[RMDB]
RNA sequence: GGGAACGACUCGAGUAGAGUCGAAAACCCCCAAGUUUCGACUUGGGGGAAUUAAAAUCAGCGGUAAAUAAUUAGCUCGCCUUACCGCUGAACGCGAGCAUAGAGCAAUGCGCUUCGGCGCAUUGAAUGUCAAUAAUUCUUUCGAGAAUUAUUGACAAAAAGAAACAACAACAACAAC
Reactivity to DMS in 0.01 (KOAc 150mM, MgCl2 10mM, bicine 150mM(pH8.5), 24C), signal-to-noise 5, nucleotides 027 to 126: c010c000c000c000c000a000a010g000u000u000u010c120g020a030c010u000u000g010g000g000g010g010a000a000u000u010a060a080a130a160u000c010a010g000c000g000g000u000a020a050a130u010a080a100u010u010a120g000c010u000c010g010c110c170u000u000a010c000c000g000c000u000g000a010a030c160g010c030g000a040g020c050a210u020a120g000a140g010c000a010a010u000g000c000g010c010u000u010c200g030g000c000g010c000a000u000u000g000a060a080
Reactivity to 2A3 in 0.01 (KOAc 150mM, MgCl2 10mM, bicine 150mM(pH8.5), 24C), signal-to-noise 4, nucleotides 027 to 126: c010c000c010c000c000a000a020g000u010u070u140c150g080a010c000u000u000g010g020g000g000g030a000a020u160u120a050a040a030a130u040c000a010g000c000g030g030u040a030a100a110u170a110a300u240u140a050g000c000u010c010g030c000c020u010u030a010c000c000g000c010u000g000a040a010c050g010c020g030a030g000c040a080u110a100g110a030g100c000a010a000u000g000c010g000c010u020u050c250g090g010c000g000c000a000u000u000g010a020a040
The data come from the RNA Mapping Database (RMDB), library M2PK50. An RNA of 177 nucleotides, treated with DMS and 2A3 and read out base by base. 2A3 adducts were read by reverse transcription with SuperScript II with manganese.